[RMDB]
RNA sequence: GGGAACGACUCGAGUAGAGUCGAAAAAAAUUAUGGUCGCCGGCACGUAUGUGCACACCGAGAAUGACACUCUUUCGCCGUCAACCGUGUCGGUUGUCUUGCACAUCAGGAAUCCGUCUGCGUUGAAUCGUUCGCAUGUAUUCGUACAUGCGAACGAAAAAGAAACAACAACAACAAC
Reactivity to DMS in 0.01 (KOAc 150mM, MgCl2 10mM, bicine 150mM(pH8.5), 24C), signal-to-noise 1, nucleotides 027 to 126: a100a080a060u030u010a070u000g010g000u000c050g010c070c040g010g020c040a030c000g000u000a030u030g070u000g000c070a070c020a020c110c070g030a080g030a040a050u030g010a100c220a090c100u000c060u000u000u000c120g020c090c070g000u010c080a040a060c070c070g020u000g020u000c040g000g000u000u010g010u000c010u000u000g040c020a000c060a070u000c000a050g000g000a010a030u000c030c030g010u000c030u000g000c050g020u010u010g010a120a090

Notes:
An RNA of 177 nucleotides, treated with DMS and read out base by base. Values are in units of 0.01, from 0 to 300, in steps of 10. For DMS the reverse transcriptase was MarathonRT. The DMS profile rests on 702 reads.